[RMDB]
Annotation: Source: RMDB library OK1LIB, as collected in RNAgym. Structure probing data (DMS and 2A3) for a 177-nucleotide construct. 2A3 adducts were read by reverse transcription with SuperScript II with manganese. Values cover nucleotides 27 to 126. Conditions: 150 mM KOAc, 10 mM MgCl2 and 150 mM bicine (pH 8.5), 24 C.
RNA sequence: GGGAACGACUCGAGUAGAGUCGAAAACUUCUGCUAGGCCCUAGAGCGAUACGCGCUCGAAUGAGCUGAUAAGGGGGCGGGUAUGCCACGAGGCAGAGGCAAGGCGGCUGCUCUCUGGUCUGGUCGGUCUGUGAGUACCUUUCGAGGUGCUCGCGGGAAAAGAAACAACAACAACAAC
Reactivity to DMS in 0.01 (KOAc 150mM, MgCl2 10mM, bicine 150mM(pH8.5), 24C), signal-to-noise 9, nucleotides 027 to 126: c050u000u010c020u010g010c020u000a100g000g000c000c010c020u000a110g000a030g010c010g010a180u030a070c200g010c020g010c000u000c010g010a100a130u030g010a100g010c020u010g000a090u020a120a100g000g000g000g000g010c020g000g010g010u020a060u020g000c010c000a090c110g000a110g000g010c010a040g010a060g010g010c070a090a100g010g010c030g000g000c040u010g000c010u010c010u000c010u000g000g010u000c020u000g000g010u000c080g010g000
Reactivity to 2A3 in 0.01 (KOAc 150mM, MgCl2 10mM, bicine 150mM(pH8.5), 24C), signal-to-noise 9, nucleotides 027 to 126: c000u030u010c010u020g010c010u020a020g010g030c000c000c000u010a010g000a000g000c010g010a010u040a080c080g010c000g000c040u010c000g010a030a070u130g010a010g020c020u020g010a060u040a080a060g060g010g000g010g000c050g020g020g030u090a050u140g010c010c000a050c060g010a080g070g000c020a010g010a010g050g020c040a040a040g080g000c010g020g000c010u030g010c000u000c000u000c010u030g010g010u000c010u010g020g010u030c020g010g010